RNA sequence: GGGAACGACUCGAGUAGAGUCGAAAAGCGGGGCUUGAAACGCGGGUAGCGCGAACGCCCGGCGAAGAAGUUCGCAUACGCGGUGUGCUGGUGCCGAAGUGUCUGCUGCAACGGCACGCUCGACACCUAGAACAUACCGUAUUCGUACGGUAUGUAAGAAUAUAUUACUGUUCGCAGUAAUAUAUUCAAAAGAAACAACAACAACAAC
Reactivity to DMS in 0.01 (KOAc 150mM, MgCl2 10mM, bicine 150mM(pH8.5), 24C), signal-to-noise 4, nucleotides 027 to 156: g010c020g010g010g020g030c030u010u000g010a150a130a050c000g000c000g020g040g010u010a180g020c050g050c040g020a120a170c150g000c020c010c010g020g020c030g010a090a300g010a080a200g010u000u000c050g010c020a140u000a060c050g010c050g000g020u000g020u010g000c030u000g000g020u000g010c010c030g030a050a180g010u000g000u000c060u010g000c060u000g020c100a170a220c100g010g000c000a030c000g000c050u000c010g010a090c000a030c010c020u000a140g010a120a080c020a010u000a010c000c000g030u000a020u000u010c290g030u000a020c010g020g000u000a000u000g010u000a040a160
Reactivity to 2A3 in 0.01 (KOAc 150mM, MgCl2 10mM, bicine 150mM(pH8.5), 24C), signal-to-noise 6, nucleotides 027 to 156: g030c050g010g020g020g000c030u080u080g100a090a120a040c040g010c040g030g060g090u170a120g110c020g000c010g060a030a000c020g010c000c010c000g020g020c030g000a030a020g060a030a020g050u060u050c020g000c060a020u050a150c100g010c070g110g010u030g010u020g050c050u070g010g000u010g000c000c020g020a090a040g040u050g030u070c090u120g090c070u090g010c030a050a010c010g010g000c020a000c020g030c050u030c020g020a010c000a020c000c010u020a040g030a080a000c000a000u000a010c000c000g000u000a010u010u070c150g030u020a000c000g000g000u000a000u010g000u000a020a000